An RNA of 177 nucleotides, treated with 2A3 and DMS and read out base by base.
For 2A3 the reverse transcriptase was SuperScript II with manganese.
For 2A3, 1,327 sequencing reads were counted.
It was measured as part of the RMDB library OK2TRN.
For DMS, 1,898 sequencing reads were counted.

RNA sequence: GGGAACGACUCGAGUAGAGUCGAAAAACGGUACGCAAGCUGCAACUCUCUAUGGACCCGAUGCUCGAUAUGAUGGGGAUGCAGAUGCUAAUGGAGAAAUAUGGCGAUCAGGCGAUGGCCGGGAUGGUGCUGUUGGAAAGUUCGCUUUCCAACAGCAAAAAGAAACAACAACAACAAC
Reactivity to 2A3 in 0.01 (KOAc 150mM, MgCl2 10mM, bicine 150mM(pH8.5), 24C), signal-to-noise 2, nucleotides 027 to 126: a000c000g040g040u100a030c080g000c050a030a120g000c000u000g000c000a000a070c020u000c000u000c010u020a030u080g120g000a010c000c030c090g070a060u160g010c060u070c060g090a000u040a040u230g070a090u250g000g000g000g080a040u020g030c000a000g030a050u060g000c000u060a090a040u100g060g000a080g100a070a090a010u190a140u110g090g000c040g040a040u020c020a020g120g080c050g050a060u030g080g050c000c060g030g000g020a020u060g020g020
Reactivity to DMS in 0.01 (KOAc 150mM, MgCl2 10mM, bicine 150mM(pH8.5), 24C), signal-to-noise 2, nucleotides 027 to 126: a160c090g010g000u000a100c190g010c020a020a170g000c000u010g000c050a060a140c040u000c000u000c040u010a050u000g010g000a060c050c100c180g020a090u020g020c160u010c010g040a040u000a020u020g000a020u010g010g010g010g000a160u000g000c030a010g000a030u000g000c010u000a100a120u000g000g000a040g000a070a100a090u010a070u000g020g010c020g000a050u000c050a130g000g000c080g020a060u000g000g000c020c000g000g000g010a070u000g000g010